[RMDB]
RNA sequence: GGGAACGACUCGAGUAGAGUCGAAAAGAUUAUGUGGGAGAUGCGCCCCGUCGUGUCACUGGAAACAGAAUUGCGAGUCGCUCGCACUAGCGAUAUUGAUGUGUACAGUAGCGUACACUGUGCUACUUUAAGGUAUGAUGACGAUACCACGUCAAAAGGUACUGGUAUCGUUCGCGAUACCAGUACCAAAAGAAACAACAACAACAAC
Reactivity to 2A3 in 0.01 (KOAc 150mM, MgCl2 10mM, bicine 150mM(pH8.5), 24C), signal-to-noise 2, nucleotides 027 to 156: g080a080u130u090a080u180g060u090g000g020g030a050g010a020u030g030c010g020c050c000c100c000g000u010c010g000u000g050u050c010a030c080u110g060g080a000a090a060c080a030g120a180a250u070u090g020c020g040a030g060u080c020g000c080u020c000g050c020a020c040u040a000g050c000g010a010u000a010u080u110g150a050u040g060u000g000u100a020c000a020g110u110a020g070c000g060u030a000c030a010c080u080g020u040g040c010u020a110c000u070u050u170a060a080g040g020u060a070u180g060a020u040g010a000c020g000a000u060a090c000c030a020c010g040u040c000a000a000a000a120